[RMDB]
RNA sequence: GGGAACGACUCGAGUAGAGUCGAAAAGGUUAUUGCUUAUUUUAGGAUUAAGCUCAAUAUAAAACUGUGGGGAUAAAGACGGACAAGCGGAAUUAUCUUAUAAAAAAAGCCGAUGUGAAUAUCGGCCGAAGGUGUUAUGUUUCGACAUAACACCUUCAAAAGAAACAACAACAACAAC
Reactivity to 2A3 in 0.01 (KOAc 150mM, MgCl2 10mM, bicine 150mM(pH8.5), 24C), signal-to-noise 3, nucleotides 027 to 126: g080g000u050u070a070u060u110g010c010u020u010a070u090u110u010u150a130g070g010a130u070u040a050a000g000c000u000c050a080a030u100a030u080a190a080a040a030c060u100g050u090g050g040g000g000a030u070a070a100a040g070a020c020g040g030a050c080a090a030g060c030g060g020a040a000u010u040a050u060c010u080u080a070u140a220a130a040a030a030a000a020g000c000c000g000a000u010g080u020g140a110a040u080a000u100c000g000g020c000c000
Reactivity to DMS in 0.01 (KOAc 150mM, MgCl2 10mM, bicine 150mM(pH8.5), 24C), signal-to-noise 2, nucleotides 027 to 126: g020g020u000u010a050u000u030g000c010u000u000a020u010u000u030u030a150g000g000a050u040u010a010a060g000c060u000c120a070a040u050a060u030a080a030a050a070c090u010g030u010g000g000g000g050a060u010a020a040a070g000a090c080g010g000a020c160a030a090g000c030g000g020a170a050u000u010a070u010c050u000u030a080u030a010a010a060a130a070a080a190g010c030c000g000a010u000g000u000g010a110a120u040a020u000c000g000g000c010c090
Structure probing data (2A3 and DMS) for a 177-nucleotide construct. 2A3 adducts were read by reverse transcription with SuperScript II with manganese. Values cover nucleotides 27 to 126. For DMS the reverse transcriptase was MarathonRT. It was measured as part of the RMDB libraries RFM100 and RFMREP. The RNA was probed in 150 mM KOAc, 10 mM MgCl2 and 150 mM bicine (pH 8.5) at 24 C.